[RMDB]
RNA sequence: GGGAACGACUCGAGUAGAGUCGAAAAGUGAUAAAUAUUAAGCAAUAAACGAAAGUUUGACUAAGUUAUACCUCUUAGGGUUGGUAAAUUUCGUGCCAGCCACCGCGGUCAUACGAUUAACCCAAACGACUUAAUCUUUUUUCGAAAAGAUUAAGUCAAAAGAAACAACAACAACAAC
Reactivity to 2A3 in 0.01 (KOAc 150mM, MgCl2 10mM, bicine 150mM(pH8.5), 24C), signal-to-noise 3, nucleotides 027 to 126: g050u050g030a060u100a260a200a010u200a100u300u200a100a010g020c020a010a150u080a160a090a000c010g030a170a030a020g000u030u030u060g030a010c030u010a000a020g010u030u030a050u070a110c000c010u070c010u090u180a050g100g000g000u000u020g010g030u030a040a120a260u180u300u230c120g020u070g000c000c000a000g000c000c010a010c010c030g030c030g000g040u040c030a070u080a080c030g060a060u060u150a100a120c020c000c000a050a080a020c110
Reactivity to DMS in 0.01 (KOAc 150mM, MgCl2 10mM, bicine 150mM(pH8.5), 24C), signal-to-noise 4, nucleotides 027 to 126: g010u000g010a130u010a070a090a070u010a090u000u000a120a080g010c020a060a100u000a040a040a060c030g000a120a080a160g020u000u010u010g020a120c060u000a080a090g010u000u010a080u010a060c050c020u000c020u000u010a070g000g000g000u000u000g000g010u000a030a080a160u010u000u020c240g010u000g000c030c020a020g020c030c010a030c080c130g000c170g000g010u000c120a080u000a030c040g010a120u010u000a070a120c000c010c020a060a110a140c180
The record gives the reactivity of an RNA of 177 nucleotides to 2A3 and DMS.
DMS adducts were read by reverse transcription with MarathonRT.
It was measured as part of the RMDB library OK2TRN.